[RMDB]
RNA sequence: GGGAACGACUCGAGUAGAGUCGAAAAGCGCGAAGCGGUGUAGCGUCACUUUGAUGGCGGUACUAUGAAUUGAUGCAAGGUGUGGAGCGACCUUAAACAGUUCCGGUGGUGCUCUGAAUGGAGUGCUUGAGGCCUCGCCGAUUCGUCGGCGAGGCAAUGAUAAACUUAAGUUCGCUUAAGUUUAUCAAAAAGAAACAACAACAACAAC
Reactivity to 2A3 in 0.01 (KOAc 150mM, MgCl2 10mM, bicine 150mM(pH8.5), 24C), signal-to-noise 7, nucleotides 027 to 156: g050c030g020c040g060a060a010g040c070g030g010u050g000u030a040g060c010g000u010c010a030c080u180u180u250g160a240u080g040g000c010g000g090u020a030c030u040a050u160g090a110a100u120u100g050a040u100g040c060a040a020g010g000u020g010u080g010g000a000g000c010g000a010c000c010u080u150a090a040a020c030a050g000u010u010c010c000g000g030u050g000g000u010g000c000u010c020u040g150a080a060u230g020g000a000g010u020g010c000u030u080g060a060g050g040c000c000u000c000g000c000c000g020a010u020u040c100g030u000c000g060g000c000g000a000g000g010c000a000a000
Reactivity to DMS in 0.01 (KOAc 150mM, MgCl2 10mM, bicine 150mM(pH8.5), 24C), signal-to-noise 2, nucleotides 027 to 156: g030c030g010c020g020a090a170g020c050g000g030u010g000u000a060g030c050g020u000c000a040c080u000u000u000g010a080u000g000g010c010g020g030u000a100c040u010a100u020g010a080a110u000u000g020a130u000g030c060a170a050g010g010u010g010u010g010g020a050g010c020g010a100c020c020u000u010a050a040a040c030a120g010u000u000c000c010g000g020u000g010g030u000g010c020u000c040u000g010a130a130u010g000g000a080g020u000g010c010u000u000g000a160g010g000c000c010u000c000g030c030c000g000a030u000u020c300g040u010c010g000g000c000g010a000g040g000c000a000a000